Conditions: 150 mM KOAc, 10 mM MgCl2 and 150 mM bicine (pH 8.5), 24 C. The record gives the reactivity of an RNA of 207 nucleotides to 2A3.
[RMDB]
RNA sequence: GGGAACGACUCGAGUAGAGUCGAAAAGAGUUCGUACGUACGAGAGUGUGUUCGAACGUUCACUCACGUUCGUGUACGUUCGAACGUGUUCGUGAUCACUCGUUCGUUCGAGAACUCGAGAUCACACGUGAGAGUACGAUCGAACGAUCGAACGAGACGCGAAAUUGGAAUUCGUUCCAAUUUCGCGAAAAGAAACAACAACAACAAC
Reactivity to 2A3 in 0.01 (KOAc 150mM, MgCl2 10mM, bicine 150mM(pH8.5), 24C), signal-to-noise 1, nucleotides 027 to 156: g100a000g000u000u060c000g020u060a090c000g070u020a020c000g020a030g000a030g160u070g000u000g000u000u000c000g000a040a020c000g010u050u040c050a070c020u060c010a100c080g150u200u130c050g000u020g000u020a000c020g000u000u000c000g020a000a000c030g000u000g010u010u070c100g010u070g030a080u070c080a060c070u000c000g030u010u010c010g000u090u080c030g030a030g050a080a000c010u010c010g000a010g000a010u100c020a000c020a020c180g040u110g080a120g000a020g050u050a100c000g040a020u010c030g000a040a030c050g000a060u060c060g000a000a020c020g020a010g000a050
About this RNA: It was measured as part of the RMDB library OK3TST.